[RMDB]
RNA sequence: GGGAACGACUCGAGUAGAGUCGAAAAGAAAGUGUGCACUUGAUACCGCGUGACUUCGGUCACGUAGUGGCACCGCGCAGGACUUUGCUGCUACUGCUUAGUCCUGCGGUAUCUUGUGCUCACGAAAGGAUACGUCACGGUUCGCCGUGACGUAUCCAAAAGAAACAACAACAACAAC
Reactivity to 2A3 in 0.01 (KOAc 150mM, MgCl2 10mM, bicine 150mM(pH8.5), 24C), signal-to-noise 2, nucleotides 027 to 126: g140a030a070a020g000u000g000u010g000c010a000c010u000u010g000a000u000a000c000c000g000c000g000u010g020a000c010u020u060c200g060g010u040c050a020c030g000u020a010g010u000g140g130c070a040c130c040g020c000g020c040a040g000g010a060c020u060u020u030g000c010u030g000c000u100a120c110u080g000c000u010u040a010g000u000c000c000u000g000c020g000g000u000a000u000c000u000u000g000u000g000c000u020c000a000c000g030a060a000a010
This 177-nucleotide RNA was probed chemically with 2A3.
The RNA was probed in 150 mM KOAc, 10 mM MgCl2 and 150 mM bicine (pH 8.5) at 24 C.
2A3 adducts were read by reverse transcription with SuperScript II with manganese.
The data come from the RNA Mapping Database (RMDB), library OK1LIB.